[RMDB]
RNA sequence: GGGAACGACUCGAGUAGAGUCGAAAAGGAUGUCCCGACCGUAGGCCGACAAUCCAGGGAACCGGAUGUCAUCACGUUGUUGCAGUACCAGAUGGCAUCUUAAAUCCGAUCUGCAAAUAAGCAUGUAAAAACCGGCAUACGUUCGCGUAUGCCGGAACUUGAUAACAUUCUUCGGAAUGUUAUCAAGAAAAGAAACAACAACAACAAC
Reactivity to 2A3 in 0.01 (KOAc 150mM, MgCl2 10mM, bicine 150mM(pH8.5), 24C), signal-to-noise 2, nucleotides 027 to 156: g050g010a060u050g050u070c040c010c030g040a110c060c080g130u140a080g020g040c040c000g030a050c090a110a100u040c040c030a010g040g020g000a030a040c030c010g030g000a000u000g020u010c020a020u000c010a010c210g060u070u020g060u090u050g000c050a000g040u110a100c050c050a020g000a000u010g010g010c010a000u000c000u000u030a030a060a000u070c000c000g010a090u020c000u040g000c020a000a060a100u180a170a060g070c070a060u160g030u300a050a020a000a080a120c000c000g000g010c000a000u000a000c000g030u010u090c210g000c010g170u020a000u030g000c000c010g000g000a000a000
Reactivity to DMS in 0.01 (KOAc 150mM, MgCl2 10mM, bicine 150mM(pH8.5), 24C), signal-to-noise 2, nucleotides 027 to 156: g000g020a150u000g000u010c010c030c000g020a080c030c030g000u000a060g030g020c050c000g020a050c060a110a110u010c060c080a150g010g010g000a140a090c090c080g000g000a030u000g000u010c000a030u000c050a180c200g030u000u000g000u000u010g000c000a110g020u000a080c080c070a130g000a040u020g000g000c000a020u000c000u000u000a040a070a070u000c020c010g000a060u010c040u010g030c010a080a080a110u000a090a120g050c040a110u000g030u000a040a090a060a130a210c010c000g030g100c000a020u000a000c000g040u020u000c280g020c040g000u000a010u000g020c070c000g020g000a000a020